[RMDB]
The data come from the RNA Mapping Database (RMDB), library RFM100. The record gives the reactivity of an RNA of 177 nucleotides to 2A3 and DMS.

RNA sequence: GGGAACGACUCGAGUAGAGUCGAAAAUGUACCCGGCGCCGCGCCCCCAGAUCUGCAUCGGAAUGUAGAAAAGAUCUUUUUAAAAAAAGUUUUGAAUUCCUCAAUGAUUUUUCUUCUGGAAAGGCAGGCUAUUAUUGACGUUCGCGUCAAUAAUAGCAAAAGAAACAACAACAACAAC
Reactivity to 2A3 in 0.01 (KOAc 150mM, MgCl2 10mM, bicine 150mM(pH8.5), 24C), signal-to-noise 3, nucleotides 027 to 126: u060g010u100a090c010c000c010g000g010c050g000c000c000g020c010g000c000c000c000c000c000a000g010a040u000c020u030g030c010a030u060c030g040g080a090a020u080g050u140a070g060a040a050a010a030g060a040u050c010u050u080u050u120u230a050a080a000a000a000a000a000g070u120u080u030u030g050a040a060u010u020c030c010u010c000a080a100u050g100a130u110u070u030u040u000c020u060u020c010u030g060g000a100a030a030g050g020c010a000g000
Reactivity to DMS in 0.01 (KOAc 150mM, MgCl2 10mM, bicine 150mM(pH8.5), 24C), signal-to-noise 1, nucleotides 027 to 126: u030g000u050a110c060c030c030g060g000c060g000c020c000g000c100g030c050c010c010c010c030a020g000a030u020c030u000g040c020a040u000c080g030g000a070a070u000g010u000a140g000a060a150a080a120g000a000u020c000u000u000u000u000u040a000a000a030a030a040a020a030g000u010u000u000u000g000a050a090u000u000c020c030u000c140a030a040u010g000a020u020u020u030u020u000c010u000u020c020u020g000g000a070a030a110g000g000c050a100g020
For 2A3 the reverse transcriptase was SuperScript II with manganese.